RNA sequence: GGGAACGACUCGAGUAGAGUCGAAAAGGGAAAAACCAACUAUUUUUCUCUUCACUGACGGUGAACACUUCUGUGACCAGAUGUGUAGGUUUUUCCCACACCAGCCAAUUCUCUAACUUUCCUGACAAGUAUUCUACAGAUUCGUCUGUAGAAUACUAAAAGAAACAACAACAACAAC
Reactivity to 2A3 in 0.01 (KOAc 150mM, MgCl2 10mM, bicine 150mM(pH8.5), 24C), signal-to-noise 5, nucleotides 027 to 126: g010g000g000a020a010a000a000a000c030c020a050a040c050u090a300u110u190u030u110u050c040u010c000u140u090c020a010c020u050g090a020c070g070g030u070g160a230a030c030a020c080u170u160c060u220g060u080g060a050c030c040a010g000a050u030g020u010g020u090a080g000g000u020u000u010u000u000c000c000c000a000c010a000c000c010a010g050c010c010a020a050u110u030c040u010c020u080a090a100c030u050u050u030c010c010u030g100a050c030a080
Reactivity to DMS in 0.01 (KOAc 150mM, MgCl2 10mM, bicine 150mM(pH8.5), 24C), signal-to-noise 4, nucleotides 027 to 126: g010g010g010a010a000a000a000a000c000c010a110a070c090u000a100u000u000u010u000u000c010u000c020u000u000c020a020c000u010g000a100c150g020g010u000g010a140a120c140a020c030u000u000c050u000g020u000g000a060c060c030a020g010a020u000g010u010g010u000a120g010g010u000u000u010u010u000c000c000c000a070c110a100c020c030a110g000c050c040a030a110u000u000c030u010c040u010a070a100c100u000u000u000c020c010u000g010a120c200a130

Chemical mapping of a 177-nucleotide RNA with 2A3 and DMS. For 2A3 the reverse transcriptase was SuperScript II with manganese. The data come from the RNA Mapping Database (RMDB), library OK2TRN.